[RMDB]
Chemical mapping of a 207-nucleotide RNA with 2A3.
RNA sequence: GGGAACGACUCGAGUAGAGUCGAAAACUGCAUCACCUGAUCACUGAUGGCUCAACGGUAUCCGGCGGUACAACUGAAUACUUGUAGCUGCCUUUUGAGCGGGUUGGCUGCAAUCCGGAACGGAGAGAAAACCUAAUUACGUUCGCGUAAUUAGGAACAAUGCUUACGGCUUCGGCCGUAAGCAUUGAAAAGAAACAACAACAACAAC
Reactivity to 2A3 in 0.01 (KOAc 150mM, MgCl2 10mM, bicine 150mM(pH8.5), 24C), signal-to-noise 3, nucleotides 027 to 156: c020u040g000c000a030u020c010a060c000c020u040g070a080u050c040a030c060u020g040a040u050g060g010c000u010c020a040a020c040g030g070u140a220u110c000c010g000g040c020g030g030u130a170c160a170a030c120u100g040a140a080u120a140c040u020u020g010u000a000g020c010u010g040c000c000u040u050u100u150g070a030g010c120g000g010g000u230u280g040g000c010u000g000c000a000a020u040c020c010g010g010a050a020c020g020g000a020g000a000g010a040a130a010a010c000c000u000a000a000u000u010a000c010g010u020u060c190g000c000g110u010a000a000u010u000a010g010g000a000a000